[RMDB]
RNA sequence: GGGAACGACUCGAGUAGAGUCGAAAAGAAGCGGCCCACUCUGAUGUCCGCGAGUCUUUAGGGAGGUUCAUCCCUACUAUCGGACCGGUCCAGGCCACCACAUGUGAGCUAUAUGAACUGGUUGAGGGUGGAUCUUUAGAUUCGUCUAAAGAUCCACAAAAGAAACAACAACAACAAC
Reactivity to DMS in 0.01 (KOAc 150mM, MgCl2 10mM, bicine 150mM(pH8.5), 24C), signal-to-noise 4, nucleotides 027 to 126: g020a090a140g010c040g030g020c060c060c070a130c100u000c090u010g000a120u010g010u010c010c020g030c050g000a070g000u000c070u000u010u000a000g020g010g010a060g000g010u010u010c160a190u000c000c000c010u010a040c100u000a100u000c050g010g010a030c020c020g010g000u000c010c010a110g000g010c010c010a030c010c190a110c240a130u020g010u000g010a090g020c020u000a120u010a150u000g010a010a010c030u000g000g020u000u000g020a080g030g000
Reactivity to 2A3 in 0.01 (KOAc 150mM, MgCl2 10mM, bicine 150mM(pH8.5), 24C), signal-to-noise 3, nucleotides 027 to 126: g060a080a010g050c020g030g040c040c070c000a070c040u160c110u200g170a210u100g060u030c020c010g000c040g040a050g050u010c030u050u110u070a010g010g010g070a080g090g040u270u220c030a110u010c080c000c000u010a020c010u010a020u100c050g050g000a010c000c010g030g010u000c010c020a030g010g010c000c010a020c010c030a190c030a130u250g030u010g000a140g020c030u030a030u000a060u290g040a020a020c010u030g010g010u040u040g040a110g150g070